Overview
The data come from the RNA Mapping Database (RMDB), libraries RFM100 and RFMREP. The record gives the reactivity of an RNA of 177 nucleotides to DMS and 2A3. The reactions ran in a buffer of 150 mM KOAc, 10 mM MgCl2 and 150 mM bicine (pH 8.5), at 24 C. For DMS the reverse transcriptase was MarathonRT.

RNA sequence: GGGAACGACUCGAGUAGAGUCGAAAAUCCGAGCCGAAAGAAGUCACUAGCUGAAAAAGAGUUUAUACUCUGAUCACACAGUAACAUUGCAAUAAAAGCUUAGCUCGAGAUGCGUGUGCCGUUCUGCCUUAGCUUAGAUGUUCGCAUCUAAGCUAAGAAAAGAAACAACAACAACAAC
Reactivity to DMS in 0.01 (KOAc 150mM, MgCl2 10mM, bicine 150mM(pH8.5), 24C), signal-to-noise 9, nucleotides 027 to 126: u000c010c010g010a040g000c020c030g010a090a080a110g000a120a100g010u000c040a020c020u000a240g010c170u000g000a030a030a090a090a010g000a010g010u010u030u030a130u040a070c010u000c000u000g000a300u000c030a040c080a130c120a020g020u000a060a040c030a070u010u010g000c050a040a080u030a070a070a110a100g000c020u000u010a170g000c010u010c020g010a090g010a030u000g000c080g000u010g010u010g000c060c060g010u010u000c010u000g010c300
Reactivity to 2A3 in 0.01 (KOAc 150mM, MgCl2 10mM, bicine 150mM(pH8.5), 24C), signal-to-noise 7, nucleotides 027 to 126: u000c020c010g000a010g010c000c020g170a150a100a040g090a100a000g020u010c020a000c030u030a040g040c100u040g020a030a030a000a030a010g040a010g010u120u150u090a160u110a040c000u000c000u010g010a030u030c010a000c000a010c010a040g010u020a050a000c020a170u070u160g020c030a060a060u110a210a160a050a000g020c020u080u050a010g000c000u010c020g070a110g010a090u110g050c060g040u130g050u100g060c020c040g050u040u010c020u020g070c010